[RMDB]
RNA sequence: GGGAACGACUCGAGUAGAGUCGAAAAGUUGGCUACCUGUGACUGGACUGAAAGUGGUGAUUACACCCUUGCCAAUACUACAACAGAACCACUCAAACUUUUUGCUGCUGAGACUUUACGUGCCACUGACCGCCAAUGUUCGCAUUGGCGAAAAGAAACAACAACAACAAC
Reactivity to DMS in 0.01 (KOAc 150mM, MgCl2 10mM, bicine 150mM(pH8.5), 24C), signal-to-noise 4, nucleotides 027 to 129: g000u000u000g020g040c080u000a000c000c000u050g000u000g050a000c160u000g000g000a100c090u000g000a070a080a050g000u030g030g000u030g030a180u050u060a050c050a070c030c000c010u010u090g030c000c040a070a050u040a150c060u060a070c120a000a000c030a000g000a040a040c040c040a050c070u000c080a000a070a070c080u010u000u000u000u000g000c000u020g000c000u000g020a100g020a090c090u000u010u010a110c110g060u010g000c010c030a090c090u040g040a000c050
Reactivity to 2A3 in 0.01 (KOAc 150mM, MgCl2 10mM, bicine 150mM(pH8.5), 24C), signal-to-noise 8, nucleotides 027 to 129: g030u050u030g000g000c020u050a050c010c020u020g000u020g040a060c020u030g000g030a030c030u070g110a040a040a040g110u140g040g000u010g020a060u040u130a070c030a040c030c020c000u010u060g020c000c000a030a020u070a100c050u020a000c010a120a000c010a040g040a100a050c010c010a050c040u100c050a060a100a130c030u050u060u020u070u150g010c000u010g000c000u010g030a010g020a100c020u060u060u070a030c070g030u040g000c010c000a050c040u030g050a060c040